[RMDB]
RNA sequence: GGGAACGACUCGAGUAGAGUCGAAAAGGGGAGGUGGAGAUGCCAUGCCGACCCGAAGAGGAAAGAAGGACUCGGACGCGAACCCGUGAGUGGAACCUUGGUCUUUUAUUGGGGGGUACACUCGAGGACAGCGACUAGUUCGCUAGUCGCAAAAGAAACAACAACAACAAC
Reactivity to DMS in 0.01 (KOAc 150mM, MgCl2 10mM, bicine 150mM(pH8.5), 24C), signal-to-noise 8, nucleotides 027 to 129: g030g000g000g010a090g060g000u020g020g000a140g010a130u050g000c080c080a070u010g000c000c000g030a100c040c030c050g040a080a070g050a110g000g030a040a040a040g050a030a010g040g000a050c010u020c010g000g040a080c080g000c050g010a090a140c040c010c000g030u030g000a020g020u020g010g010a130a090c020c010u000u000g000g040u050c130u060u050u030u070a080u050u030g000g030g040g020g020g000u020a140c090a040c050u020c000g020a120g000g000a120c160a040
Reactivity to 2A3 in 0.01 (KOAc 150mM, MgCl2 10mM, bicine 150mM(pH8.5), 24C), signal-to-noise 8, nucleotides 027 to 129: g010g010g000g000a020g020g010u050g020g040a120g020a070u140g090c040c020a060u110g040c000c010g030a050c000c010c000g010a030a010g040a020g010g010a060a040a040g030a030a020g010g000a020c010u020c050g010g010a010c030g010c020g040a050a060c000c000c000g030u090g020a010g010u040g020g030a060a030c000c000u030u060g070g030u100c030u060u210u070u080a180u160u130g000g000g000g000g000g000u030a020c010a020c010u010c000g010a030g010g030a020c040a040